RNA sequence: GGGAACGACUCGAGUAGAGUCGAAAACUGGUCACGGAUAUCGAAGGCGAUCACCGUCUGCGCACUAGAGCUGCAGCCGUCGUCCGGCUGGGAGAUACCGCUGACGGAGAUGUACUGCGGCAUGUACAGCGUGGGCUGCUGGAUGUCGAGCCCGAAGCGUUCUAGUUCCAUUCGUGGAACUAGAACGAAAAGAAACAACAACAACAAC
Reactivity to DMS in 0.01 (KOAc 150mM, MgCl2 10mM, bicine 150mM(pH8.5), 24C), signal-to-noise 1, nucleotides 027 to 156: c050u000g020g040u000c000a050c030g000g010a150u020a090u000c090g010a090a070g000g020c000g010a060u010c030a150c060c030g020u000c000u010g020c050g030c030a140c110u020a110g000a150g010c010u010g000c000a030g040c050c020g010u020c050g000u020c070c000g010g020c030u000g020g030g000a230g030a240u000a110c040c040g000c020u020g000a120c000g000g000a120g010a050u010g020u000a020c020u000g010c010g000g020c020a120u000g010u000a070c000a050g000c010g040u000g000g010g030c010u000g000c010u010g000g000a170u000g020u000c070g000a230g020c020c000c000g000a160a170g010
Reactivity to 2A3 in 0.01 (KOAc 150mM, MgCl2 10mM, bicine 150mM(pH8.5), 24C), signal-to-noise 4, nucleotides 027 to 156: c050u070g060g070u110c040a040c080g100g020a080u060a060u170c030g020a090a030g100g010c060g010a020u050c000a020c060c020g000u000c020u020g010c010g000c000a000c080u080a030g020a060g180c020u090g000c000a010g000c010c010g030u100c040g220u030c070c000g050g000c010u050g010g050g020a180g050a080u170a100c040c050g020c170u030g010a020c000g030g000a040g000a020u070g030u130a140c020u030g010c000g040g010c010a030u130g030u130a030c040a040g010c000g020u050g020g040g030c000u020g000c040u050g090g010a030u050g010u030c040g030a020g010c030c000c000g020a060a020g060